[RMDB]
RNA sequence: GGGAACGACUCGAGUAGAGUCGAAAAGAAACUUCGUGGUUGGGACUUGACCCCAGCCAAAAUUGAGAGUGGGACUGGGAAUCUACCUUGCCCUCAGCUUGGCACCUGAAUCCAGGAUCCCAGGUUCGUUAGAACCUGCUUUCGAGCAGGUUCUAACAAAAGAAACAACAACAACAAC
Reactivity to DMS in 0.01 (KOAc 150mM, MgCl2 10mM, bicine 150mM(pH8.5), 24C), signal-to-noise 6, nucleotides 027 to 126: g010a130a140a090c080u000u000c090g020u010g000g020u010u000g000g000g010a110c100u020u010g010a190c130c000c000c010a000g000c000c010a010a010a080a110u010u000g010a110g000a090g010u000g000g000g010a060c040u010g000g010g000a120a110u000c080u000a070c020c020u000u000g010c020c030c090u000c170a100g010c040u000u000g000g020c060a050c150c040u000g000a100a080u010c070c020a040g000g000a140u000c020c000c010a060g010g010u000u010c100
Reactivity to 2A3 in 0.01 (KOAc 150mM, MgCl2 10mM, bicine 150mM(pH8.5), 24C), signal-to-noise 4, nucleotides 027 to 126: g020a010a070a000c050u100u100c110g090u040g020g020u000u010g000g010g020a080c080u090u230g110a230c010c020c000c030a010g000c010c000a040a040a040a080u120u100g060a100g010a020g060u070g010g030g020a030c020u010g010g020g020a050a130u010c010u040a100c020c020u010u020g010c020c010c010u100c040a010g030c020u060u040g020g000c040a060c070c060u020g020a040a030u030c050c020a010g030g040a120u030c000c000c010a010g080g040u080u090c050
About this RNA
This 177-nucleotide RNA was probed chemically with DMS and 2A3. Source: RMDB library OK2TRN, as collected in RNAgym. The reactions ran in a buffer of 150 mM KOAc, 10 mM MgCl2 and 150 mM bicine (pH 8.5), at 24 C. The DMS profile rests on 8,108 reads. 2A3 adducts were read by reverse transcription with SuperScript II with manganese.